[RMDB]
RNA sequence: GGGAACGACUCGAGUAGAGUCGAAAACUCAAUGUAGGGAAUAACAUUGAAUUGAUACAAAUACCUUUUUCGGUGUAGGGAAGAACACCGAAUUGAUACAAAUACCUUUCUCAAUGUAGGGAAUAACAAAACAGGCAUCGCUUCGGCGAUGCCUGAACGAAGGAUAUGCGUUCGCGCAUAUCCUUCGAAAAGAAACAACAACAACAAC
Reactivity to 2A3 in 0.01 (KOAc 150mM, MgCl2 10mM, bicine 150mM(pH8.5), 24C), signal-to-noise 3, nucleotides 027 to 156: c030u030c020a000a030u030g020u050a090g020g130g090a130a200u130a130a000c000a000u010u030g020a080a030u030u090g060a040u120a220c090a040a230a050u170a070c000c010u010u030u010u040u000c000g000g000u010g010u010a020g000g010g020a160a010g030a050a030c000a000c000c010g010a000a000u010u030g010a000u010a040c040a000a130a010u070a070c010c000u020u070u040c020u010c070a040a050u090g040u120a100g020g000g040a030a060u090a140a000c080a040a060a010a020c000a010g020g000c010a010u010c000g020c040u030u130c230g080g000c000g000a000u000g000c000c000u000g000a000a000
Description: The data come from the RNA Mapping Database (RMDB), library M2RFPK. The record gives the reactivity of an RNA of 207 nucleotides to 2A3. Reactivities are given for positions 27 through 156.